Source: RMDB library ARCHII, as collected in RNAgym. An RNA of 207 nucleotides, treated with 2A3 and DMS and read out base by base.
RNA sequence: GGGAACGACUCGAGUAGAGUCGAAAACCUGUGUUUGCGCUGCUCUGAGCGAACAUAUCGGCCCGACGCCAAACGGAGCUUGCUCUUACGUUGUGCACGGCGGACGUAGGGGGACUUUUGUCUGUGCUAAGACUCUGGCGCGUGCGGUGCAGGCCUACUAAGUCUAUACGUUCGCGUAUAGACUUAGAAAAGAAACAACAACAACAAC
Reactivity to 2A3 in 0.01 (KOAc 150mM, MgCl2 10mM, bicine 150mM(pH8.5), 24C), signal-to-noise 8, nucleotides 027 to 156: c000c010u010g010u010g000u010u030u030g050c040g000c030u160g010c020u040c050u120g040a020g020c010g020a020a010c010a020u090a080u140c080g040g000c000c020c020g100a150c030g030c030c050a070a060a030c030g010g010a040g010c000u040u220g020c010u020c010u030u020a010c030g010u010u050g090u070g080c070a060c140g160g000c030g010g020a000c010g010u020a020g010g020g000g000g010a030c020u120u080u170u180g060u010c030u020g060u040g070c040u060a080a040g040a060c020u030c060u100g040g000c040g000c030g060u060g040c020g000g010u040g010c040a020g020g040c010c000u030a060
Reactivity to DMS in 0.01 (KOAc 150mM, MgCl2 10mM, bicine 150mM(pH8.5), 24C), signal-to-noise 3, nucleotides 027 to 156: c010c020u000g050u000g010u000u000u000g010c000g020c010u000g020c090u010c070u020g000a240g000c020g020a020a030c030a070u000a060u000c080g010g000c000c020c010g000a120c040g010c020c030a060a080a080c050g040g020a040g020c020u000u010g020c030u010c020u010u000a040c040g020u000u010g030u000g040c090a100c080g040g010c030g000g000a030c010g020u000a000g020g010g000g010g000a090c040u000u010u000u000g010u000c010u000g030u010g030c100u000a110a090g010a070c020u000c040u000g010g000c000g030c020g020u010g030c110g010g010u000g010c020a060g010g000c030c020u010a230
For 2A3 the reverse transcriptase was SuperScript II with manganese. For 2A3, 8,354 sequencing reads were counted. High DMS reactivity at an A or C suggests that its Watson-Crick edge is free.